Structure probing data (DMS and 2A3) for a 177-nucleotide construct.
For 2A3 the reverse transcriptase was SuperScript II with manganese.
The data come from the RNA Mapping Database (RMDB), library OK1LIB.
For 2A3, 1,966 sequencing reads were counted.
Conditions: 150 mM KOAc, 10 mM MgCl2 and 150 mM bicine (pH 8.5), 24 C.
[RMDB]
RNA sequence: GGGAACGACUCGAGUAGAGUCGAAAAGAAGAGAAAGGAGACACACGGACAGUCUCCAGAGGUUCCUAAGGGCUCGAUCGCGCCUGCCGGGAAUCAUGGACUCCCGGUUGUCCAUGAGAGAAGAAGACCGCAUACCUAAUUUCGAUUAGGUAUGCGGAAAAGAAACAACAACAACAAC
Reactivity to DMS in 0.01 (KOAc 150mM, MgCl2 10mM, bicine 150mM(pH8.5), 24C), signal-to-noise 3, nucleotides 027 to 126: g000a070a120g010a090g010a050a140a140g010g010a000g000a040c010a130c090a090c150g000g020a100c120a120g000u000c000u000c000c010a130g000a100g000g000u010u020c000c010u010a040a120g020g000g010c040u000c060g000a090u000c120g010c170g000c020c010u000g030c050c170g000g000g000a040a070u000c030a050u000g010g020a010c030u000c010c000c030g000g020u000u020g010u000c050c010a050u000g000a070g010a060g020a110a100g000a120a140g000a170
Reactivity to 2A3 in 0.01 (KOAc 150mM, MgCl2 10mM, bicine 150mM(pH8.5), 24C), signal-to-noise 2, nucleotides 027 to 126: g070a000a020g080a020g070a060a040a040g060g000a070g000a000c060a000c020a040c210g100g030a030c110a050g030u010c020u000c010c000a000g020a010g000g010u010u030c000c000u010a040a070g050g010g000c030u000c090g110a150u080c070g030c060g020c040c000u030g020c070c010g000g000g030a010a020u020c000a030u020g040g000a000c010u020c000c040c010g050g000u080u030g020u000c000c020a060u090g010a020g020a010g030a220a000g070a070a000g060a050